[RMDB]
RNA sequence: GGGAACGACUCGAGUAGAGUCGAAAAUCACCCGAGCGCUGCUUGCCGCUAGUCGCGCGGACUUCCAAGUCUCCCUCCCGAGCCGCUUUUCUCUUCACCUAAUUUCCGUAGCAGCGGGGAGAGGGUGGAGUAUAUAAUGCUUCGGCAUUAUAUACUCAAAAGAAACAACAACAACAAC
Reactivity to 2A3 in 0.01 (KOAc 150mM, MgCl2 10mM, bicine 150mM(pH8.5), 24C), signal-to-noise 1, nucleotides 027 to 126: u110c020a130c000c000c000g060a050g070c050g000c030u070g010c000u040u040g020c050c030g000c040u040a040g150u090c040g010c020g000c000g040g050a030c030u190u020c080c030a160a080g040u010c030u030c010c010c030u040c030c000c000g000a010g030c010c010g040c120u080u000u070u000c030u030c000u160u130c010a010c010c000u030a050a070u030u050u050c020c030g020u040a060g060c090a030g030c000g000g020g040g000a030g000a010g000g000g000u010g000
Reactivity to DMS in 0.01 (KOAc 150mM, MgCl2 10mM, bicine 150mM(pH8.5), 24C), signal-to-noise 2, nucleotides 027 to 126: u000c130a110c020c010c020g000a120g010c040g030c020u010g020c020u000u000g040c050c040g020c040u000a050g020u000c160g010c080g020c050g010g010a090c090u010u020c100c060a080a170g000u010c020u000c020c010c010u000c010c020c030g000a120g010c020c030g020c090u010u010u010u000c030u000c010u000u010c020a010c010c010u030a030a300u000u000u010c010c020g010u010a120g030c190a110g010c000g000g020g000g000a010g000a300g000g010g010u010g000